[RMDB]
RNA sequence: GGGAACGACUCGAGUAGAGUCGAAAAACAAGGAGCUAAGUGAACAAGCAUUUCCUCCUUUGGAAGGUUUACUCAUAGCCCCCUCCCUGCCCCUGCUGAGGGUGGGUGAGAGGAUGUCCUCCGGCUGCCUUGCUUUAGAUUUCGAUCUAAAGCAAGGAAAAGAAACAACAACAACAAC
Reactivity to 2A3 in 0.01 (KOAc 150mM, MgCl2 10mM, bicine 150mM(pH8.5), 24C), signal-to-noise 3, nucleotides 027 to 126: a030c050a040a050g020g010a040g000c030u050a040a020g040u020g070a080a020c050a160a040g140c020a060u020u010u030c010c000u060c030c060u150u090u090g020g000a030a030g090g000u010u040u050a050c020u030c080a080u090a100g020c020c000c000c010c000u000c000c000c000u010g000c000c010c000c010u080g080c050u080g040a150g040g000g020u020g010g000g020u150g020a060g000a020g020g020a030u090g040u040c000c010u010c020c020g060g010c050u070g010
Reactivity to DMS in 0.01 (KOAc 150mM, MgCl2 10mM, bicine 150mM(pH8.5), 24C), signal-to-noise 5, nucleotides 027 to 126: a070c090a100a060g010g000a050g020c050u000a040a060g010u000g010a040a060c090a130a100g010c110a100u000u000u000c120c010u010c300c170u000u000u000g010g000a060a040g000g010u000u000u000a060c060u000c110a100u000a110g010c030c010c000c010c000u000c010c000c010u010g000c010c000c000c040u000g020c170u000g010a150g000g000g010u000g010g000g000u000g020a020g010a080g010g010a080u000g000u000c070c000u000c100c050g020g010c100u000g010

Background: Structure probing data (2A3 and DMS) for a 177-nucleotide construct. Values are in units of 0.01, from 0 to 300, in steps of 10. The data come from the RNA Mapping Database (RMDB), library OK2TRN. DMS adducts were read by reverse transcription with MarathonRT. As a SHAPE reagent, 2A3 marks flexible, mostly unpaired nucleotides at the ribose 2'-OH. Conditions: 150 mM KOAc, 10 mM MgCl2 and 150 mM bicine (pH 8.5), 24 C.